An RNA of 207 nucleotides, treated with 2A3 and read out base by base.
2A3 is a SHAPE reagent: it acylates the 2'-hydroxyl of flexible nucleotides of all four kinds.
For 2A3, 1,407 sequencing reads were counted.
RNA sequence: GGGAACGACUCGAGUAGAGUCGAAAAGACGCCUUUAGAAGAAGAGGCUAGGGGGUAUUCCGGUGUGGGAUACUUAGUAAUAUGCAACGCUACUUGCAUAAGAUUGUAGGACGGAAUUUACAGUCUUUAGAGAUAAGCACGUUCGCGUGCUUAUCAAGUGGAAUGGAAAGUUCGCUUUCCAUUCCACAAAAGAAACAACAACAACAAC
Reactivity to 2A3 in 0.01 (KOAc 150mM, MgCl2 10mM, bicine 150mM(pH8.5), 24C), signal-to-noise 3, nucleotides 027 to 156: g030a000c040g000c000c010u090u070u090a240g000a200a010g020a060a000g000a040g040g010c030u050a090g060g050g010g010g040u020a030u070u010c020c050g120g080u190g020u250g080g000g000a030u020a040c010u030u010a040g020u040a070a080u020a020u130g000c010a030a020c100g020c080u110a050c010u040u030g000c000a020u000a070a020g030a020u040u100g010u060a010g000g100a030c090g070g060a080a050u100u140u070a110c050a010g000u000c010u030u090u100a140g040a000g000a050u000a000a010g000c000a000c010g010u030u060c100g010c010g100u000g000c000u000u000a000u000c000a010a000